[RMDB]
RNA sequence: GGGAACGACUCGAGUAGAGUCGAAAAGUAAAAGAGGAGAAAGCGCGCACUCCUCAAGCGCGCAGAUGUACGUACCACAUCAGGUACGUACGCGCCAAGGGUGGGAGGCGCGAACCCACCCAAAAAAGGGAUAUACGUAGUUCGCUACGUAUAUCCCAAAAGAAACAACAACAACAAC
Reactivity to 2A3 in 0.01 (KOAc 150mM, MgCl2 10mM, bicine 150mM(pH8.5), 24C), signal-to-noise 2, nucleotides 027 to 126: g080u120a020a060a130a140g040a040g000g010a040g050a060a150a010g080c010g010c000g000c040a050c020u020c010c000u020c010a000a030g030c010g000c000g010c050a000g040a160u240g000u010a010c000g000u000a000c000c020a080c020a300u190c130a040g000g000u000a000c000g000u010a000c010g000c010g000c000c040a080a060g020g010g000u010g000g020g010a090g000g030c020g000c000g040a010a020c000c010c000a000c010c020c040a040a120a000a000a000a000
Reactivity to DMS in 0.01 (KOAc 150mM, MgCl2 10mM, bicine 150mM(pH8.5), 24C), signal-to-noise 2, nucleotides 027 to 126: g000u000a070a110a100a080g020a030g030g000a030g000a040a060a080g030c030g010c020g030c030a140c020u000c030c010u010c060a060a080g010c130g000c000g020c030a100g010a070u010g030u000a000c000g020u010a010c010c000a110c300a110u010c290a060g050g000u000a000c000g000u000a000c000g000c010g000c030c110a080a100g030g020g000u020g010g000g010a080g010g000c000g000c070g000a060a070c000c000c000a000c010c010c010a010a010a050a050a010a050